This 177-nucleotide RNA was probed chemically with DMS and 2A3. Reactivities are given for positions 27 through 126.

[RMDB]
RNA sequence: GGGAACGACUCGAGUAGAGUCGAAAAAACGCCGCAGGCGACCUGACUGCCGUUAUCACCCCGGACGGCAACCGGAGCGAGACACAGUACGAUGCGUGGGGAAAGGCGGUCAGCACCACGCAGGGCGUCAUGCCAAGGGAUUCGUCCCUUGGCAUGAAAAAGAAACAACAACAACAAC
Reactivity to DMS in 0.01 (KOAc 150mM, MgCl2 10mM, bicine 150mM(pH8.5), 24C), signal-to-noise 2, nucleotides 027 to 126: a090a040c030g020c010c010g040c120a140g030g040c040g020a130c200c010u010g010a030c010u000g010c010c010g020u000u000a120u000c060a130c030c010c000c000g030g010a070c050g000g000c170a040a050c060c010g000g000a070g010c040g010a060g010a040c100a110c110a100g000u000a120c060g010a120u000g020c020g010u000g010g000g000g020a060a100a100g000g020c010g020g030u000c020a010g030c020a110c030c030a060c030g020c010a050g000g010g000c020g020
Reactivity to 2A3 in 0.01 (KOAc 150mM, MgCl2 10mM, bicine 150mM(pH8.5), 24C), signal-to-noise 1, nucleotides 027 to 126: a000a000c030g010c050c010g000c070a080g190g000c030g040a020c010c000u000g010a010c000u000g000c000c000g120u080u110a200u260c060a110c010c030c000c020g030g230a110c020g070g080c020a050a030c060c020g000g020a110g010c050g050a020g040a070c040a010c020a190g120u130a010c040g050a060u050g070c010g040u160g010g000g010g080a060a030a090g010g000c030g020g010u020c000a000g030c010a030c040c010a050c000g030c000a010g050g000g000c000g010